Notes
The data come from the RNA Mapping Database (RMDB), library OK1LIB. This 177-nucleotide RNA was probed chemically with 2A3 and DMS. High 2A3 reactivity points to a flexible backbone, as in loops and unpaired stretches. For 2A3, 1,271 sequencing reads were counted. The RNA was probed in 150 mM KOAc, 10 mM MgCl2 and 150 mM bicine (pH 8.5) at 24 C. 2A3 adducts were read by reverse transcription with SuperScript II with manganese.

RNA sequence: GGGAACGACUCGAGUAGAGUCGAAAAGUCUUUUCAAAGUCCGGAUAUAGGCUGUUAGAUAGGAAGACCAUGAUGAACAUAUUAAACAUCAUAAACGAGACGUCUUUGAAUGUAACUUGACCAAAUCGGUUAAUCAAGCGUUCGCGCUUGAUUAACCAAAAGAAACAACAACAACAAC
Reactivity to 2A3 in 0.01 (KOAc 150mM, MgCl2 10mM, bicine 150mM(pH8.5), 24C), signal-to-noise 3, nucleotides 027 to 126: g020u030c020u050u050u000u000c010a000a090a000g010u000c050c090g040g030a040u090a030u070a170g020g080c000u020g060u200u040a140g020a100u070a050g000g250a060a060g000a060c010c010a030u000g040a000u020g020a140a040c090a100u110a210u150u300a130a140a080c000a000u020c020a010u070a020a210a040c080g050a050g030a130c030g030u050c000u010u000u040g070a080a030u070g020u030a060a080c000u030u020g000a030c000c000a000a090a120u220c040
Reactivity to DMS in 0.01 (KOAc 150mM, MgCl2 10mM, bicine 150mM(pH8.5), 24C), signal-to-noise 2, nucleotides 027 to 126: g000u000c040u000u000u040u000c010a060a020a010g020u020c190c000g030g000a140u080a120u070a030g010g000c060u000g000u000u040a100g000a040u020a240g000g060a110a060g000a080c090c240a090u000g000a020u010g000a130a150c180a060u020a070u040u060a040a010a190c000a020u030c030a000u040a000a000a060c190g030a070g040a160c190g000u000c060u000u000u010g000a130a020u000g020u000a020a000c020u010u030g000a090c020c000a040a060a060u080c110